[RMDB]
RNA sequence: GGGAACGACUCGAGUAGAGUCGAAAAAGUCAGAGGGCGCUACCAUGCAAACUAGGGCUGGCUAUUCUUGCACAGAAUCACAUCUCGAUAAUUGUCAGUGCAAGAAGGACAAUUAUACCAUUUAAUGAAAACGUUUACCUGUUCGCAGGUAAACGAAGUAAAUCAUACAGUUCGCUGUAUGAUUUACAAAAGAAACAACAACAACAAC
Reactivity to 2A3 in 0.01 (KOAc 150mM, MgCl2 10mM, bicine 150mM(pH8.5), 24C), signal-to-noise 9, nucleotides 027 to 156: a000g020u020c010a010g020a040g050g010g010c030g000c030u090a220c080c060a100u200g010c030a030a060a060c020u050a040g060g050g000c010u000g020g000c010u080a120u040u000c000u000u010g000c010a010c010a020g190a100a080u150c050a060c020a230u070c080u070c140g090a070u040a100a040u080u050g020u060c040a020g000u000g010c010a000a000g010a010a010g020g010a000c020a040a020u090u040a030u060a110c020c050a070u090u160u180a170a130u170g080a030a040a010a020c000g010u000u000u000a000c000c000u010g020u030u060c190g000c060a000g000g000u000a000a000a000c000g000a030a000
Reactivity to DMS in 0.01 (KOAc 150mM, MgCl2 10mM, bicine 150mM(pH8.5), 24C), signal-to-noise 3, nucleotides 027 to 156: a060g060u010c050a070g010a020g000g030g030c110g060c050u000a100c040c050a140u000g000c080a050a110a170c080u000a150g030g010g020c000u000g000g000c030u010a110u010u000c000u000u000g000c040a080c010a140g000a100a120u000c070a060c070a160u010c100u000c060g010a120u000a050a070u000u000g030u010c020a300g000u000g010c020a050a070g020a030a070g000g000a040c070a070a080u000u000a000u000a090c060c010a100u000u000u000a060a140u010g000a070a060a090a140c020g050u000u010u000a000c010c000u000g020u000u000c300g000c010a030g000g030u000a000a000a000c000g000a020a040